[RMDB]
RNA sequence: GGGAACGACUCGAGUAGAGUCGAAAAUUUUGCUAAGGAAAUAGAUGAACCUCUCUCAAAGCAAUAGUCCUGCCGAAAUGGCCCAUAGUAAUUACAAGAGUUCCCAUUUGCCAUCAGGCCAGUUGACCCAUCCUGAGGAAGAUUCCAAGUGCAGCACCGUUCCAAUGUAGUUCGCUACAUUGGAACGAAAAGAAACAACAACAACAAC
Reactivity to DMS in 0.01 (KOAc 150mM, MgCl2 10mM, bicine 150mM(pH8.5), 24C), signal-to-noise 1, nucleotides 027 to 156: u020u010u010u000g020c040u000a110a060g030g010a040a020a060u010a110g010a190u010g010a110a090c070c020u000c020u000c030u000c050a070a040a070g040c020a040a080u030a060g010u000c020c020u000g050c090c030g000a070a080a010u000g010g000c030c110c040a110u000a110g010u000a020a060u000u010a060c090a060a110g030a250g010u000u000c010c010c000a220u000u000u000g000c020c010a050u000c060a230g030g040c040c040a030g050u000u000g000a050c050c050c000a040u000c010c010u010g000a130g030g010a050a080g000a150u000u000c060c020a090a230g040u010g040c000a090g000c050a040c070
Reactivity to 2A3 in 0.01 (KOAc 150mM, MgCl2 10mM, bicine 150mM(pH8.5), 24C), signal-to-noise 2, nucleotides 027 to 156: u060u080u030u110g030c030u060a060a040g030g040a060a170a100u090a160g110a130u030g040a070a070c020c000u030c000u030c030u030c040a070a110a000g020c000a000a030u000a050g070u010c040c020u040g000c010c000g030a030a080a080u080g010g000c010c000c000a030u020a030g060u110a210a130u110u190a120c040a140a020g040a040g180u020u000c020c000c000a010u060u060u090g000c020c010a070u080c050a050g000g030c050c000a030g010u040u090g050a040c010c010c000a040u040c020c000u020g030a010g030g020a050a030g030a090u180u030c040c030a040a000g080u030g020c000a020g020c020a050c120